[RMDB]
RNA sequence: GGGAACGACUCGAGUAGAGUCGAAAAGAUAUGGACGCAGGGAGAUCUGGGAGGCACAUUGCUGUAUAUUCGGAAACGAAUAUACAGCAAUAGCCUCCCAAGGAUCGAAGAACUGCGUCCUAAGUCACAUGGUUACUCAGUUCGCUGAGUAACCAUGAAAAGAAACAACAACAACAAC
Reactivity to DMS in 0.01 (KOAc 150mM, MgCl2 10mM, bicine 150mM(pH8.5), 24C), signal-to-noise 1, nucleotides 027 to 126: g010a010u010a300u010g000g010a050c000g000c000a020g010g030g000a090g020a010u000c010u000g020g010g020a030g010g010c010a090c230a110u000u000g000c010u000g000u000a000u000a000u000u000c000g000g000a070a140a250c010g010a010a020u000a000u000a000c000a010g000c000a010a000u000a060g000c000c000u000c000c000c000a000a020g000g000a020u000c010g000a070a120g000a100a250c000u000g000c010g000u020c000c040u000a010a030g040u000c020a250